The data come from the RNA Mapping Database (RMDB), library OK2TST. Structure probing data (DMS and 2A3) for a 177-nucleotide construct. The 2A3 profile rests on 1,394 reads. For DMS the reverse transcriptase was MarathonRT.
RNA sequence: GGGAACGACUCGAGUAGAGUCGAAAACACAACUCCGUUCAGCUUCUACUGCUUGGGCAAGCCAUCUUAUGUAUUCCAAAGGGACAUGGGACUUGAAGAACGGAAAACAGGAAACGCGGUCUGCCCACCCCUAAAUUAGCUUCGGCUAAUUUAGGGGAAAAGAAACAACAACAACAAC
Reactivity to DMS in 0.01 (KOAc 150mM, MgCl2 10mM, bicine 150mM(pH8.5), 24C), signal-to-noise 1, nucleotides 027 to 126: c050a070c220a070a160c120u040c000c000g000u000u000c040a110g000c070u020u000c130u000a210c110u000g020c100u000u000g030g030g030c040a040a060g030c000c020a250u000c020u000u000a010u000g020u000a100u000u000c040c050a130a230a100g000g030g030a020c030a030u000g000g010g000a020c170u000u000g030a060a080g000a020a040c030g020g010a020a070a040a170c130a020g010g000a070a050a120c190g020c100g000g000u000c040u000g050c000c030c030a300
Reactivity to 2A3 in 0.01 (KOAc 150mM, MgCl2 10mM, bicine 150mM(pH8.5), 24C), signal-to-noise 2, nucleotides 027 to 126: c110a010c020a030a120c040u010c020c000g010u000u010c020a010g000c050u070u050c020u240a180c110u150g060c020u060u080g020g020g000c050a020a020g000c040c000a030u000c020u040u040a030u020g040u010a180u120u030c020c030a220a150a210g110g000g010a000c000a010u010g000g010g050a010c020u070u110g030a100a060g030a010a050c010g010g000a000a070a010a030c040a040g140g110a090a120a030c080g060c110g040g000u040c010u020g000c000c040c040a040